[RMDB]
RNA sequence: GGGAACGACUCGAGUAGAGUCGAAAAUACGAACGCUCGCGGCGUGCUUAACACGUACAAGUCGAACGAUGAAGCCCAUCGGGAUGGAUCGCUGGCGAACGCGAGGGUCACACGUGGGCAAAAUGCCAAAUAAAUAUUAAUUCGUUAAUAUUUAUUUAAAAGAAACAACAACAACAAC
Reactivity to 2A3 in 0.01 (KOAc 150mM, MgCl2 10mM, bicine 150mM(pH8.5), 24C), signal-to-noise 9, nucleotides 027 to 126: u210a010c040g030a060a010c030g010c070u010c010g030c020g030g010c020g010u010g000c010u130u170a140a040c010a000c010g020u090a060c030a090a030g040u060c030g050a060a020c020g020a030u070g070a070a050g020c000c000c000a080u150c090g010g010g020a070u090g070g080a020u020c010g010c130u030g060g020c030g040a060a010c030g000c000g020a020g040g060g010u020c010a020c010a000c080g030u070g010g000g000c000a070a090a050a050u190g010c000c000
Reactivity to DMS in 0.01 (KOAc 150mM, MgCl2 10mM, bicine 150mM(pH8.5), 24C), signal-to-noise 9, nucleotides 027 to 126: u040a080c090g010a130a070c040g010c020u000c030g030c040g000g000c080g010u000g000c100u030u040a130a190c090a050c060g010u000a090c140a110a240g000u010c010g010a050a160c030g000a040u000g010a150a170g000c040c010c010a090u020c120g010g000g000a080u020g010g010a050u010c000g010c070u000g000g000c030g000a080a100c080g000c020g000a030g000g000g010u000c050a070c120a070c060g010u000g010g010g010c020a080a070a080a080u020g020c040c030
An RNA of 177 nucleotides, treated with 2A3 and DMS and read out base by base. For 2A3 the reverse transcriptase was SuperScript II with manganese. The RNA was probed in 150 mM KOAc, 10 mM MgCl2 and 150 mM bicine (pH 8.5) at 24 C. For 2A3, 11,017 sequencing reads were counted.